Source information:
Source: RMDB library OK3TST, as collected in RNAgym. This 207-nucleotide RNA was probed chemically with 2A3 and DMS. DMS adducts were read by reverse transcription with MarathonRT. The reactions ran in a buffer of 150 mM KOAc, 10 mM MgCl2 and 150 mM bicine (pH 8.5), at 24 C. For DMS, 2,664 sequencing reads were counted. Values are in units of 0.01, from 0 to 300, in steps of 10. Reactivities are given for positions 27 through 156. For 2A3 the reverse transcriptase was SuperScript II with manganese.
RNA sequence: GGGAACGACUCGAGUAGAGUCGAAAAUUUGAGUGGCCCGGCUGAAAUUGCUGGUCACUACAUUGAAUCAGUCAUUAAGGCCAACGCUGCAUUGUGCAAGCUUGAGGGACAAGGCGUUCGGUAUAACGGAUUGACUUGGCAUAUGCGAGGAGAGAAACUACGAUAAAGACUUCGGUCUUUAUCGUAGAAAAGAAACAACAACAACAAC
Reactivity to 2A3 in 0.01 (KOAc 150mM, MgCl2 10mM, bicine 150mM(pH8.5), 24C), signal-to-noise 4, nucleotides 027 to 156: u070u030u100g020a010g010u010g040g000c070c120c120g040g000c020u020g080a010a070a140u270u190g010c010u030g000g000u000c010a000c010u090a090c040a050u030u080g040a060a060u040c010a010g060u020c020a060u080u090a060a060g040g000c000c010a030a020c030g000c030u040g020c070a080u080u080g020u090g040c010a070a080g020c040u070u150g040a080g040g060g040a020c020a030a050g020g020c020g010u040u030c110g000g050u020a070u040a210a010c040g030g030a020u010u080g010a030c000u050u040g020g000c030a040u060a030u210g050c020g040a040g030g020a060g020a010g000a050a050a020
Reactivity to DMS in 0.01 (KOAc 150mM, MgCl2 10mM, bicine 150mM(pH8.5), 24C), signal-to-noise 2, nucleotides 027 to 156: u000u000u010g010a200g040u000g010g030c040c010c120g180g020c010u040g000a070a130a110u000u000g020c010u010g020g010u010c020a030c040u010a040c080a070u000u010g030a200a060u000c020a040g040u000c110a120u000u000a060a170g000g000c010c000a050a090c040g040c000u000g010c090a120u000u020g040u010g030c060a060a090g020c030u090u000g010a100g060g020g010a110c030a060a090g000g020c050g000u010u000c070g020g040u000a080u000a050a130c070g020g000a060u000u000g010a060c020u000u000g010g060c060a070u010a080u000g020c030g020a120g010g010a060g010a100g000a120a040a150